[RMDB]
Chemical mapping of a 177-nucleotide RNA with 2A3 and DMS. For 2A3 the reverse transcriptase was SuperScript II with manganese. Reactivities are given for positions 27 through 126.
RNA sequence: GGGAACGACUCGAGUAGAGUCGAAAAGAUAUGGAACGUGAACAUCGAAGAACGAGGUGUAUCGGAAACGAUACACUCCCCACCGGGAGAUGACGUUCCUAAGUCAAAACACCUCUUCGGAGGUGAAGGAGAAUAAAUAGUUCGCUAUUUAUUCUCCAAAAGAAACAACAACAACAAC
Reactivity to 2A3 in 0.01 (KOAc 150mM, MgCl2 10mM, bicine 150mM(pH8.5), 24C), signal-to-noise 8, nucleotides 027 to 126: g000a000u030a010u040g000g000a010a000c010g020u080g130a240a080c010a020u030c050g140a270a170g130a280a110c080g010a030g020g060u020g010u010a010u000c000g000g000a000a000a000c000g000a000u000a000c000a000c000u020c000c000c010c000a150c120c190g050g010g020a130g000a020u020g020a010c000g000u000u000c000c000u000a010a000g000u020c010a000a010a080a150c010a010c020c010u020c010u050u080c300g180g010a000g020g000u000g010a020a050
Reactivity to DMS in 0.01 (KOAc 150mM, MgCl2 10mM, bicine 150mM(pH8.5), 24C), signal-to-noise 7, nucleotides 027 to 126: g000a030u000a070u020g010g000a010a000c010g020u010g020a110a300c060a040u000c010g020a200a170g000a110a140c100g000a070g000g020u000g010u000a000u000c000g000g000a020a020a040c000g010a020u000a000c000a000c000u000c010c010c020c090a170c300c130g010g000g000a090g000a030u000g010a050c000g000u000u000c000c000u000a010a070g000u000c030a050a060a080a150c010a000c000c000u000c000u000u010c170g020g000a010g000g000u000g000a020a060
Notes: The RNA was probed in 150 mM KOAc, 10 mM MgCl2 and 150 mM bicine (pH 8.5) at 24 C. For 2A3, 26,747 sequencing reads were counted.